This 177-nucleotide RNA was probed chemically with 2A3 and DMS. The RNA was probed in 150 mM KOAc, 10 mM MgCl2 and 150 mM bicine (pH 8.5) at 24 C. High DMS reactivity at an A or C suggests that its Watson-Crick edge is free. For DMS, 1,235 sequencing reads were counted.
RNA sequence: GGGAACGACUCGAGUAGAGUCGAAAAGAUAUGGACGAAGUCCUGGGAGUGUCGAUCGGAAACGAUCGGGAGCACGAAGAACAGGCUUCGUCCUAAGUCAAAAGCUAAGCCCUUCGGGGCUUAGCAAUCCCUUCUAGGAGUUCGCUCCUAGAAGGGAAAAAGAAACAACAACAACAAC
Reactivity to 2A3 in 0.01 (KOAc 150mM, MgCl2 10mM, bicine 150mM(pH8.5), 24C), signal-to-noise 1, nucleotides 027 to 126: g000a000u040a020u070g000g010a000c000g020a050a020g230u300c110c060u080g070g100g060a270g020u010g300u300c020g000a020u020c000g030g020a010a000a000c030g000a000u010c030g050g080g050a160g080c010a020c110g040a190a140g120a250a020c010a000g000g020c000u000u020c000g030u000c010c000u000a010a000g000u000c010a010a180a000a000g000c010u010a000a000g020c000c040c000u030u080c300g000g080g000g000c000u000u000a000g000c010a000a000
Reactivity to DMS in 0.01 (KOAc 150mM, MgCl2 10mM, bicine 150mM(pH8.5), 24C), signal-to-noise 1, nucleotides 027 to 126: g000a030u000a170u010g010g000a050c010g000a050a020g010u020c020c010u000g000g040g030a230g020u000g000u020c020g000a000u000c000g010g000a070a020a200c000g000a020u000c000g000g000g000a300g000c020a000c000g000a170a260g010a130a130c030a030g000g020c000u000u010c010g000u010c010c000u000a000a060g000u010c030a100a130a090a180g010c000u000a010a010g030c000c000c000u000u020c280g020g010g000g000c000u000u000a000g010c010a020a020